[RMDB]
RNA sequence: GGGAACGACUCGAGUAGAGUCGAAAAUGAGAUAGCUAAAUCACCUCGGUAUGAUUAGGGUGAGACCUAGGAACCGUAGGGGUAUUCUCAAAGGAAGCUUUUGCAGUGACGCCCCUGUAAGUGGGAUAAGAACCAACCCACUUCGGUGGGUUGGUAAGCUUUCUAUAUCGUUCGCGAUAUAGAAAGCAAAAGAAACAACAACAACAAC
Reactivity to DMS in 0.01 (KOAc 150mM, MgCl2 10mM, bicine 150mM(pH8.5), 24C), signal-to-noise 1, nucleotides 027 to 156: u000g020a070g000a070u000a110g000c080u000a050a040a130u020c010a050c010c000u000c020g000g080u000a070u000g010a180u000u010a040g020g000g030u000g010a250g010a200c030c020u010a100g000g010a120a120c010c010g000u020a030g000g020g010g010u000a080u000u000c010u000c040a030a120a130g000g030a110a130g000c030u000u000u000u000g070c060a110g010u000g010a180c040g010c010c000c000c000u020g000u000a040a100g000u010g020g010g080a160u000a040a140g010a140a060c010c010a020a030c000c010c010a040c030u010u010c140g030g000u000g010g020g000u000u010g000g000u000a000a030
Reactivity to 2A3 in 0.01 (KOAc 150mM, MgCl2 10mM, bicine 150mM(pH8.5), 24C), signal-to-noise 2, nucleotides 027 to 156: u140g000a040g050a120u100a050g080c060u120a060a120a120u100c020a050c030c020u060c040g050g000u180a170u200g080a100u100u130a040g030g000g020u040g100a090g040a030c000c010u020a020g000g080a030a030c040c030g040u050a020g000g010g000g000u000a030u050u030c030u000c000a030a050a000g090g020a090a050g080c040u030u050u150u090g010c030a010g040u050g040a040c020g020c000c010c000c020u020g050u120a080a140g050u150g030g040g020a050u080a120a040g060a040a000c000c000a000a010c000c000c000a000c000u010u020c060g100g000u010g020g000g000u000u000g010g010u010a000a000